RNA sequence: GGGAACGACUCGAGUAGAGUCGAAAAGAGAUUCAGGGAACAACAGAGCCACACGUCAGAAACUUCCGUCAGCCGGACCUCCGGCACUGUAACCCUUUACCUGCCGGUAUCCACAUCUGUGGAUACCCUAUCGAUCGAAGUUCGCUUCGAUCGAUAGAAAAGAAACAACAACAACAAC
Reactivity to 2A3 in 0.01 (KOAc 150mM, MgCl2 10mM, bicine 150mM(pH8.5), 24C), signal-to-noise 1, nucleotides 027 to 126: g130a000g000a010u080u060c040a010g000g000g070a230a060c020a020a020c000a050g030a010g070c010c020a070c000a010c070g050u030c040a020g070a170a140a050c030u080u020c030c030g050u050c040a020g080c050c020g020g030a070c020c020u100c030c050g000g030c000a000c020u010g000u010a000a030c020c020c000u000u040u080a080c010c010u010g100c050c020g000g000u000a010u030c000c000a020c010a120u210c230u270g000u000g000g030a000u000a000c000c000
Reactivity to DMS in 0.01 (KOAc 150mM, MgCl2 10mM, bicine 150mM(pH8.5), 24C), signal-to-noise 1, nucleotides 027 to 126: g000a070g000a050u000u000c030a040g010g000g000a060a080c050a100a070c030a020g000a090g000c020c080a080c080a050c120g010u000c050a070g000a090a130a070c110u010u010c030c060g000u040c130a110g010c100c020g010g000a110c120c280u000c100c060g020g020c000a010c020u000g010u000a140a050c010c030c030u020u000u000a040c040c070u000g020c080c110g000g010u000a000u000c000c000a010c000a220u010c230u010g000u010g000g000a010u000a000c000c000